[RMDB]
RNA sequence: GGGAACGACUCGAGUAGAGUCGAAAAGCUGUGCUCGGAGGCCGACAGCGAAGACAUCUCUCAUGGAAGUGCCGGAGUUGUCGAUUACCAGCUUGACUGGGGCCGGCCUGGCAGUCUUGCUGGGAAAGGGAUGGUUCUGCUUCGGCAGGAUCAUCCCAAAAGAAACAACAACAACAAC
Reactivity to 2A3 in 0.01 (KOAc 150mM, MgCl2 10mM, bicine 150mM(pH8.5), 24C), signal-to-noise 9, nucleotides 027 to 126: g010c020u020g010u020g040c030u050c070g080g020a040g020g030c010c010g020a020c010a020g030c030g040a060a010g050a020c040a080u020c020u000c000u010c040a100u140g080g040a090a060g030u050g100c040c020g020g010a060g010u010u020g020u010c010g010a010u020u050a050c000c000a000g000c000u020u030g010a020c000u000g000g040g060g050c010c010g000g010c000c020u060g060g030c000a000g000u000c000u010u010g000c000u010g000g010g020a050a040a050
Reactivity to DMS in 0.01 (KOAc 150mM, MgCl2 10mM, bicine 150mM(pH8.5), 24C), signal-to-noise 8, nucleotides 027 to 126: g010c020u000g010u010g010c040u000c060g000g010a080g010g010c040c030g000a080c040a050g000c030g000a140a130g010a070c060a050u000c040u000c020u010c100a120u030g010g010a070a090g010u010g000c080c060g000g010a230g000u000u000g010u000c020g000a200u000u010a130c020c000a010g010c010u010u000g010a030c000u000g000g000g000g000c030c020g000g000c020c020u000g000g020c010a010g010u000c010u010u000g000c010u000g000g000g010a060a100a120

Description:
Structure probing data (2A3 and DMS) for a 177-nucleotide construct. It was measured as part of the RMDB library OK1LIB. The 2A3 profile rests on 34,006 reads.